[RMDB]
RNA sequence: GGGAACGACUCGAGUAGAGUCGAAAAAGGGAGAAAUGCUCAUCCAAUAGAAUCAUUGAGAAAGGAACCUGCUUUCACAGCUAAAGCCAAAUCUAUAAGCAACAGUAUAAGUGAUUUGGAGGUAGAACGCUCUACUAUGAUUCGUCAUAGUAGAGCGAAAAGAAACAACAACAACAAC
Reactivity to 2A3 in 0.01 (KOAc 150mM, MgCl2 10mM, bicine 150mM(pH8.5), 24C), signal-to-noise 4, nucleotides 027 to 126: a010g080g010g010a090g020a040a120a060u210g030c030u040c030a080u000c030c030a030a020u100a090g150a100a060u140c040a070u090u190g080a070g030a120a070a010g050g020a020a030c020c010u040g010c020u030u100u090c050a060c030a050g030c050u090a150a000a000g000c020c010a040a000a050u010c020u030a090u060a230a040g090c020a030a100c010a080g090u170a090u070a300a040g080u030g050a060u010u010u050g030g020a010g030g000u060a050g020a120a010
Reactivity to DMS in 0.01 (KOAc 150mM, MgCl2 10mM, bicine 150mM(pH8.5), 24C), signal-to-noise 4, nucleotides 027 to 126: a080g010g000g010a090g000a150a080a030u000g010c060u010c050a080u030c010c030a050a140u010a110g000a110a090u010c070a060u000u000g000a100g000a050a070a090g020g020a110a130c080c030u000g010c070u010u000u000c060a130c100a040g000c060u010a030a060a090g010c010c020a010a020a050u000c030u000a040u000a100a170g000c070a060a040c180a060g010u000a050u030a060a120g020u010g000a060u000u000u000g000g000a050g020g000u000a050g010a070a140